[RMDB]
RNA sequence: GGGAACGACUCGAGUAGAGUCGAAAAGAGUCAUACAACCCCAGAAACCAUUCUUUAUACCUUGAGUAUUGCUGAAUUCAGUUUAGCGUGCAUGCUCUUGGCUAUUCUCAUAGUGAUUGUCAAAUUUAAAACGACGAUGACUUCGGUCAUCGUCGAACUCGUUCUAAUUGUUCGCAAUUAGAACGAGAAAAGAAACAACAACAACAAC
Reactivity to 2A3 in 0.01 (KOAc 150mM, MgCl2 10mM, bicine 150mM(pH8.5), 24C), signal-to-noise 3, nucleotides 027 to 156: g010a000g020u050c020a010u110a240c060a040a110c000c010c030c030a010g090a070a030a000c020c000a090u120u000c020u040u150u070a150u040a050c000c000u000u000g000a010g000u020a060u200u200g000c010u040g040a100a160u160u270c060a080g170u060u060u150a030g040c070g040u090g020c010a010u030g000c000u010c000u000u030g000g000c000u030a050u040u100c060u040c040a090u070a160g110u100g130a180u020u120g070u140c080a040a080a150u050u170u240a060a220a060a060c030g000a000c000g000a000u000g000a000c000u000u020c260g040g000u000c000a000u000c010g000u000c000g000a000a000